[RMDB]
Chemical mapping of a 207-nucleotide RNA with 2A3 and DMS. It was measured as part of the RMDB library OK3TST. Reactivities are given for positions 27 through 156. 2A3 is a SHAPE reagent: it acylates the 2'-hydroxyl of flexible nucleotides of all four kinds. The RNA was probed in 150 mM KOAc, 10 mM MgCl2 and 150 mM bicine (pH 8.5) at 24 C. For DMS, 2,860 sequencing reads were counted.

RNA sequence: GGGAACGACUCGAGUAGAGUCGAAAAGCGGUAGAUGUAUUAGACAAAACUAUUCCAAUGUUUAACAAGGGCCAUUUUACGAGAUUAUUAAAUCCUUGUUUGAUAAAUGUAGCCAAUGAGGGUUCGAGUUCAACGACGAUUGAAUUCUCUUCCCGCGCAUCUGAUUCAGUUUCGACUGAAUCAGAUGAAAAGAAACAACAACAACAAC
Reactivity to 2A3 in 0.01 (KOAc 150mM, MgCl2 10mM, bicine 150mM(pH8.5), 24C), signal-to-noise 3, nucleotides 027 to 156: g000c030g010g080u080a040g030a130u070g060u110a100u120u050a060g040a030c070a010a100a030a040c040u090a080u090u060c050c000a070a050u060g010u010u060u040a020a020c000a020a010g000g030g020c070c030a030u020u050u100u140a070c060g040a020g000a200u070u100a050u100u190a190a040a020u020c000c000u010u020g000u020u030u070g030a020u030a070a100a020u060g030u090a010g030c030c020a030a050u090g020a030g000g020g000u020u080c030g000a010g000u040u070c060a080a030c040g200a020c070g040a120u020u060g000a010a020u040u010c010u000c000u020u040c000c000c000g020c000g000
Reactivity to DMS in 0.01 (KOAc 150mM, MgCl2 10mM, bicine 150mM(pH8.5), 24C), signal-to-noise 2, nucleotides 027 to 156: g010c020g000g030u000a060g010a080u000g000u000a090u000u000a140g010a170c040a060a070a110a190c060u010a140u000u000c050c050a090a180u000g000u000u010u000a030a040c030a120a060g000g050g020c070c100a110u020u000u000u010a190c050g000a140g000a160u020u010a090u000u000a040a100a080u000c010c010u020u010g000u000u000u000g020a050u000a010a080a110u000g020u000a100g020c030c040a070a050u010g010a030g030g040g020u000u000c040g020a080g010u000u000c020a020a110c050g000a130c070g000a300u020u000g040a050a050u000u000c000u000c020u000u000c010c000c010g010c060g030